[RMDB]
RNA sequence: GGGAACGACUCGAGUAGAGUCGAAAAGUUCGUCCAGGUUCGGGCUGCCUGACGCCAGUAGCUUUCGUGUCGCUUUUGUCUAUGUCAUGGGUUGACGUACGGUCAGGUCGCAGGGCAGCACACGGGAUCAAGGGAUCGGCUUCGGUCGGUCCCUUGAAAAAGAAACAACAACAACAAC
Reactivity to 2A3 in 0.01 (KOAc 150mM, MgCl2 10mM, bicine 150mM(pH8.5), 24C), signal-to-noise 4, nucleotides 027 to 126: g040u030u080c020g020u030c070c010a050g040g040u030u100c030g040g050g020c010u020g010c010c000u020g000a030c020g030c030c000a070g030u060a010g010c000u010u040u110c020g010u010g010u040c030g010c040u020u020u070u100g080u030c020u080a120u150g060u020c000a020u040g030g100g000u040u120g030a040c000g020u080a030c010g050g030u030c010a000g010g020u010c000g010c020a020g000g020g000c000a010g000c020a020c010a000c040g030g010g000a020
Reactivity to DMS in 0.01 (KOAc 150mM, MgCl2 10mM, bicine 150mM(pH8.5), 24C), signal-to-noise 9, nucleotides 027 to 126: g010u010u010c030g010u010c020c030a090g010g020u020u010c080g000g010g020c010u000g010c010c020u000g000a160c140g000c080c030a080g000u020a070g000c040u000u010u010c070g010u000g000u010c040g010c050u000u020u020u020g010u030c130u020a100u040g010u010c040a040u000g000g000g010u020u030g000a050c030g010u020a080c120g000g000u000c040a080g000g010u010c130g020c050a150g010g000g000c020a040g000c050a060c050a090c040g000g010g000a120